Annotation: Structure probing data (2A3 and DMS) for a 177-nucleotide construct. For DMS the reverse transcriptase was MarathonRT. The RNA was probed in 150 mM KOAc, 10 mM MgCl2 and 150 mM bicine (pH 8.5) at 24 C.
RNA sequence: GGGAACGACUCGAGUAGAGUCGAAAAGGGAGAGAGCGUGAUGAUGAGAUCGAAGAAAUCAUCCUCCAGUUCCUCCAGCGUCUGCGGCUGCCGGCGUCCGAGCGAGAGGCCGAUCUCGUCGAGAACGCACCUAUAGUGACUUCGGUCACUAUAGGUGAAAAGAAACAACAACAACAAC
Reactivity to 2A3 in 0.01 (KOAc 150mM, MgCl2 10mM, bicine 150mM(pH8.5), 24C), signal-to-noise 9, nucleotides 027 to 126: g090g020g010a060g000a020g010a010g020c030g020u060g020a070u040g000a000u010g010a010g020a030u080c080g070a140a070g070a070a200a030u100c040a050u030c010c010u000c010c020a020g010u030u020c010c010u010c010c010a020g010c010g030u020c020u050g030c020g120g050c110u180g020c020c000g000g010c000g030u050c040c050g020a040g030c040g020a100g000a010g050g070c040c010g010a050u010c010u000c020g030u010c010g010a040g020a090a010c020g000
Reactivity to DMS in 0.01 (KOAc 150mM, MgCl2 10mM, bicine 150mM(pH8.5), 24C), signal-to-noise 9, nucleotides 027 to 126: g010g000g010a040g010a090g000a060g020c050g010u010g000a150u020g010a010u000g000a020g010a090u000c040g010a180a130g010a060a100a150u040c120a120u010c020c020u000c010c070a140g000u010u010c020c020u000c040c080a140g000c030g010u000c020u020g000c040g010g000c090u040g010c040c030g000g000c030g000u000c040c200g000a060g000c080g000a160g000a060g010g020c210c040g000a030u000c000u000c010g030u010c010g010a080g020a230a060c060g000